[RMDB]
RNA sequence: GGGAACGACUCGAGUAGAGUCGAAAAACAUUAAUGAAGUAACAGGAGGCAAAAGGCCUGGAGCUAUGCUCAGCUUAGGGGUAGCUGUGUCUUUACCACAGGAUGUGUGCCUCAAGCACCCAGGAAACCUUUGACUUAUCUUCGGAUAAGUCAAAGGAAAAGAAACAACAACAACAAC
Reactivity to DMS in 0.01 (KOAc 150mM, MgCl2 10mM, bicine 150mM(pH8.5), 24C), signal-to-noise 1, nucleotides 027 to 126: a090c100a040u000u000a070a090u000g020a110a080g000u000a030a190c090a090g000g000a010g020g000c030a080a110a070a070g000g000c010c000u000g000g000a080g030c010u010a030u030g010c080u000c060a040g010c040u000u000a080g020g010g010g010u010a060g050c020u010g000u000g000u010c120u000u030u000a080c120c010a030c070a060g000g000a030u000g030u000g000u000g010c000c010u030c060a090a080g010c080a150c010c010c000a150g030g000a100a080a110
Reactivity to 2A3 in 0.01 (KOAc 150mM, MgCl2 10mM, bicine 150mM(pH8.5), 24C), signal-to-noise 1, nucleotides 027 to 126: a030c000a030u150u220a150a100u190g100a160a040g020u090a060a000c050a140g180g070a040g020g000c020a070a000a200a000g110g000c050c010u040g080g030a020g000c000u050a020u150g040c000u000c040a030g000c040u060u120a030g000g020g000g020u000a030g020c030u030g010u030g000u030c070u140u110u140a040c000c000a010c040a080g020g030a060u040g020u030g000u020g080c000c040u020c000a000a010g010c020a010c000c000c010a000g000g070a050a010a000
Source: RMDB library RFMREP, as collected in RNAgym.
Structure probing data (DMS and 2A3) for a 177-nucleotide construct.
For DMS the reverse transcriptase was MarathonRT.
The DMS profile rests on 828 reads.
For 2A3, 802 sequencing reads were counted.
The reactions ran in a buffer of 150 mM KOAc, 10 mM MgCl2 and 150 mM bicine (pH 8.5), at 24 C.